[RMDB]
Annotation
The record gives the reactivity of an RNA of 177 nucleotides to DMS and 2A3. For 2A3 the reverse transcriptase was SuperScript II with manganese. The RNA was probed in 150 mM KOAc, 10 mM MgCl2 and 150 mM bicine (pH 8.5) at 24 C. The 2A3 profile rests on 16,209 reads.
RNA sequence: GGGAACGACUCGAGUAGAGUCGAAAACUACAUAAAUUCGUUUAUGUAGCAUCGGGGACGCGCAGACUCCCCGUCAGACGGCUCUAGCCUUCCAACCUCUGCACUCAACAGCUUUCGAGCUGUUGAAACUCAAAGGUAGUUUCGACUACCUUUGAGUAAAAGAAACAACAACAACAAC
Reactivity to DMS in 0.01 (KOAc 150mM, MgCl2 10mM, bicine 150mM(pH8.5), 24C), signal-to-noise 7, nucleotides 027 to 126: c000u000a010c000a010u000a000a000a030u010u000c190g010u000u000u000a000u000g010u000a000g010c080a080u010c020g000g000g000g000a020c090g020c140g010c050a040g000a070c110u000c000c000c000c000g020u000c190a050g000a140c090g010g020c010u010c140u000a110g010c010c010u000u000c020c120a060a080c120c040u000c000u000g000c030a230c200u000c000a000a000c000a010g000c000u000u000u010c170g010a010g020c010u000g010u000u000g000a010a080
Reactivity to 2A3 in 0.01 (KOAc 150mM, MgCl2 10mM, bicine 150mM(pH8.5), 24C), signal-to-noise 7, nucleotides 027 to 126: c000u010a000c000a000u010a010a020a020u060u070c130g050u050u010u000a000u000g010u000a010g020c030a070u110c010g000g010g000g000a010c020g080c020g000c100a010g030a150c030u000c000c000c010c000g000u000c000a040g010a050c020g010g000c010u040c090u170a080g020c010c010u030u010c020c040a080a080c020c040u020c020u030g010c030a040c060u020c000a010a010c000a000g030c000u070u080u210c270g150a010g000c000u010g000u000u000g000a020a010